RNA sequence: GGGAACGACUCGAGUAGAGUCGAAAAAUCCAUCACCUUGUUCGUCUUCUCAUGAGAGCUUUCCAAGAUAUACAGAGGCAACGUUCUUCAGUGGCUAGUGGUGGAAGCCAACAACCAGGAGCAUAUGCGUCCUACAGCUUUUCGAAGCUGUAGGACGAAAAGAAACAACAACAACAAC
Reactivity to 2A3 in 0.01 (KOAc 150mM, MgCl2 10mM, bicine 150mM(pH8.5), 24C), signal-to-noise 1, nucleotides 027 to 126: a030u070c000c010a100u040c030a010c020c020u030u130g060u160u130c050g070u000c080u040u000c010u030c060a180u150g080a010g020a030g090c020u000u050u130c000c000a020a020g120a110u090a070u040a210c070a070g090a070g040g000c100a060a050c050g000u000u010c000u090u050c040a050g020u030g050g010c020u030a070g000u070g040g040u020g050g000a020a020g040c000c010a030a020c010a010a030c040c020a060g050g050a030g040c050a030u110a030u240g050
Reactivity to DMS in 0.01 (KOAc 150mM, MgCl2 10mM, bicine 150mM(pH8.5), 24C), signal-to-noise 2, nucleotides 027 to 126: a130u010c040c010a060u000c030a040c060c070u020u010g040u000u000c160g010u000c020u000u000c010u000c140a080u020g000a180g020a110g010c070u010u000u000c010c060a130a070g000a100u000a090u020a100c090a150g000a130g000g040c010a090a060c090g020u000u000c080u020u020c060a090g020u010g050g020c010u000a130g050u000g020g020u010g010g000a060a150g010c030c020a040a050c050a040a050c030c110a090g000g000a080g020c080a080u000a120u000g010